[RMDB]
RNA sequence: GGGAACGACUCGAGUAGAGUCGAAAAUCACUUUGUAGUACUAUGGAAAAGGCUGGUGGAGUUAUAAGAGUGGAGUCUAGCAGAUUACUCUUCCACCCAAAGUGCCCUUGACUGAUCUCAUCCUACAUAUUUAACAGUUGUUCGCAACUGUUAAAUAAAAAGAAACAACAACAACAAC
Reactivity to DMS in 0.01 (KOAc 150mM, MgCl2 10mM, bicine 150mM(pH8.5), 24C), signal-to-noise 9, nucleotides 027 to 126: u010c020a040c030u000u000u000g010u010a100g010u010a060c040u010a100u010g010g010a120a140a120a060g010g010c060u010g010g020u000g010g000a140g010u010u010a090u020a080a040g010a030g020u000g010g010a080g010u000c030u000a130g010c150a170g000a060u010u000a050c010u000c010u010u000c010c010a020c020c000c040a020a020a040g010u000g000c050c010c000u000u000g010a070c070u000g010a090u000c080u000c060a090u000c020c020u000a080c180a140
Reactivity to 2A3 in 0.01 (KOAc 150mM, MgCl2 10mM, bicine 150mM(pH8.5), 24C), signal-to-noise 5, nucleotides 027 to 126: u080c010a010c020u060u050u050g020u040a120g030u100a070c030u040a090u200g070g010a100a110a050a020g050g010c060u020g050g010u010g040g010a070g040u270u170a200u090a290a030g020a000g020u050g070g160a070g040u000c020u030a060g060c050a030g040a050u060u040a010c000u000c000u060u000c010c000a010c000c000c010a030a080a030g020u020g000c020c000c000u030u060g060a060c030u030g030a060u010c030u020c040a080u030c020c010u050a100c030a110

Structure probing data (DMS and 2A3) for a 177-nucleotide construct.
For DMS the reverse transcriptase was MarathonRT.
The reactions ran in a buffer of 150 mM KOAc, 10 mM MgCl2 and 150 mM bicine (pH 8.5), at 24 C.
For 2A3, 7,577 sequencing reads were counted.
In probing experiments dimethyl sulfate is read out at A N1 and C N3, which are open when not base-paired.
The data come from the RNA Mapping Database (RMDB), library OK2TRN.